[RMDB]
RNA sequence: GGGAACGACUCGAGUAGAGUCGAAAAGAUUACGUGUCGUUGUGGAAUCGAUACUACGCACGAGAUUCCAAGGUCUGUGUAGUACGUCCGCUGGUGACGUCUUUGGAGUCACGUUCGAUAUACGAAAGCUAUGUACUAGCUUCGGCUAGUACAUAGCAAAAGAAACAACAACAACAAC
Reactivity to DMS in 0.01 (KOAc 150mM, MgCl2 10mM, bicine 150mM(pH8.5), 24C), signal-to-noise 3, nucleotides 027 to 126: g000a110u030u020a050c150g000u000g000u030c060g000u000u000g050u000g010g010a080a100u010c030g020a060u000a020c090u010a050c010g010c120a010c050g000a080g010a070u010u020c030c030a050a020g000g000u000c060u020g010u000g020u010a030g000u030a050c020g020u000c000c010g030c090u010g020g000u010g000a020c000g000u000c020u000u000u030g000g020a090g000u000c010a050c000g020u020u000c020g020a070u000a080u010a100c030g010a020a130a100
Reactivity to 2A3 in 0.01 (KOAc 150mM, MgCl2 10mM, bicine 150mM(pH8.5), 24C), signal-to-noise 3, nucleotides 027 to 126: g110a040u170u250a050c060g000u020g010u010c010g020u010u060g020u000g020g060a030a110u050c020g000a030u010a060c040u030a020c030g020c000a020c040g020a000g000a040u090u000c010c020a050a020g060g000u070c060u080g060u020g070u090a030g050u030a030c010g010u010c010c000g010c160u140g100g060u150g030a000c020g080u050c000u010u050u090g080g000a010g010u010c010a000c020g020u050u040c000g000a020u040a030u030a190c050g040a100a030a000
About this RNA:
An RNA of 177 nucleotides, treated with DMS and 2A3 and read out base by base. For DMS the reverse transcriptase was MarathonRT. Reactivities are given for positions 27 through 126.